RNA sequence: GGGAACGACUCGAGUAGAGUCGAAAAGAUAUGGAUUCCAGAAGGACGAUGAGAUGUGGUUCGGAAACGAACCCAUCGAGUCCCUGGAAUCCUAAGUCAAACCCGCUGCAGUUCGCUGCAGCGGGAACCCAUGUAGGAUGUUCGCAUCCUACAUGGGAAAAGAAACAACAACAACAAC
Reactivity to DMS in 0.01 (KOAc 150mM, MgCl2 10mM, bicine 150mM(pH8.5), 24C), signal-to-noise 1, nucleotides 027 to 126: g000a010u000a030u000g010g000a010u000u000c000c000a000g030a300a260g010g010a010c000g020a200u010g000a090g000a020u000g010u010g030g010u000u000c000g010g000a010a000a020c010g020a000a010c000c000c000a000u000c000g000a000g020u000c010c010c020u000g000g000a010a000u010c000c010u000a000a040g000u000c000a080a100a220c000c000c000g000c000u000g010c000a030g000u000u010c300g020c010u020g000c000a020g000c000g000g020g000a010a010
Reactivity to 2A3 in 0.01 (KOAc 150mM, MgCl2 10mM, bicine 150mM(pH8.5), 24C), signal-to-noise 4, nucleotides 027 to 126: g000a000u020a010u050g010g000a000u020u000c000c010a000g090a300a300g120g000a000c040g210a300u300g020a000g000a000u020g140u300g050g010u020u010c000g000g000a000a000a000c000g000a010a000c030c010c000a000u000c000g000a000g010u000c000c000c000u030g000g020a000a010u000c000c000u000a000a000g000u020c020a020a060a300c020c000c050g000c000u000g000c000a160g000u080u300c300g160c240u000g000c000a000g000c000g000g010g000a000a000
Background: The record gives the reactivity of an RNA of 177 nucleotides to DMS and 2A3. Values are in units of 0.01, from 0 to 300, in steps of 10. For DMS the reverse transcriptase was MarathonRT. The data come from the RNA Mapping Database (RMDB), library TTRDES. Reactivities are given for positions 27 through 126. The reactions ran in a buffer of 150 mM KOAc, 10 mM MgCl2 and 150 mM bicine (pH 8.5), at 24 C.